The data come from the RNA Mapping Database (RMDB), library RNAMAK. Structure probing data (2A3) for a 207-nucleotide construct. For 2A3 the reverse transcriptase was SuperScript II with manganese. The RNA was probed in 150 mM KOAc, 10 mM MgCl2 and 150 mM bicine (pH 8.5) at 24 C.

RNA sequence: GGGAACGACUCGAGUAGAGUCGAAAAGGGGUCUAAAUGUAGAACUGGCAAAGCCUUGGAUUUACAGGCUGAAGCCUCCACGGCCUGUUGUCAGGCUUUGACAGUUCGCAGAUAUUUAGACGGAGGCACCCAAAAGCUGAUGGUUCGCCAUCAGCAACACCUCCAUAGUCUUCGGACUAUGGAGGUGAAAAGAAACAACAACAACAAC
Reactivity to 2A3 in 0.01 (KOAc 150mM, MgCl2 10mM, bicine 150mM(pH8.5), 24C), signal-to-noise 2, nucleotides 027 to 156: g020g010g010g010u040c010u000a000a050a020u000g010u040a120g010a000a010c000u000g010g000c050a010a010a040g000c080c040u210u300g150g000a060u150u180u160a020c010a000g020g000c010u020g010a030a020g010c000c020u000c000c000a020c020g030g000c010c010u000g000u010u000g040u030c220a150g000g000c000u000u000u010g000a010c000a000g000u010u000c000g000c000a000g000a010u060a010u000u050u020a000g000a020c040g000g000a010g000g000c010a020c000c000c030a030a160a010a050g010c000u000g010a010u010g010g050u040u090c300g120c120c000a000u050c000a000g000c000a000a000